[RMDB]
Notes: This 177-nucleotide RNA was probed chemically with 2A3 and DMS. 2A3 adducts were read by reverse transcription with SuperScript II with manganese. Values cover nucleotides 27 to 126. The DMS profile rests on 2,402 reads. It was measured as part of the RMDB library OK2TRN. For DMS the reverse transcriptase was MarathonRT. The RNA was probed in 150 mM KOAc, 10 mM MgCl2 and 150 mM bicine (pH 8.5) at 24 C.

RNA sequence: GGGAACGACUCGAGUAGAGUCGAAAAGAAGUCCAUGUGGAUUUUGCAUUCCAUUGCAUAUUUCCAAGUCGGCUUUGCUAUAAACACAAAUAUUCUCCAGAAAGACUUGCCAUGGGCAUCCUUCAGGGACCUACCUAUAGUUCGCUAUAGGUAGGUCAAAAGAAACAACAACAACAAC
Reactivity to 2A3 in 0.01 (KOAc 150mM, MgCl2 10mM, bicine 150mM(pH8.5), 24C), signal-to-noise 3, nucleotides 027 to 126: g040a090a000g000u000c010c010a040u090g040u080g030g020a020u030u090u050u020g000c000a000u290u150c090c040a080u090u080g000c000a020u020a020u280u040u000c000c000a030a010g030u020c020g020g030c010u030u110u110g000c030u120a120u150a290a190a020c080a010c030a110a110a030u120a110u140u060c040u070c060c000a020g090a100a070a010g020a080c040u050u090g000c050c000a090u090g010g000g000c000a040u010c020c000u080u050c040a010g070g090
Reactivity to DMS in 0.01 (KOAc 150mM, MgCl2 10mM, bicine 150mM(pH8.5), 24C), signal-to-noise 4, nucleotides 027 to 126: g010a070a070g020u000c000c030a110u000g040u010g000g000a020u000u000u010u000g000c010a040u000u010c230c220a110u000u000g000c000a030u020a010u000u000u000c060c020a060a080g010u000c190g000g010c070u000u000u010g030c130u010a150u000a090a100a120c170a070c150a070a090a090u010a110u000u000c020u010c060c050a170g000a100a100a120g000a040c050u010u000g000c110c030a050u010g020g000g010c010a050u000c020c030u000u010c060a130g020g010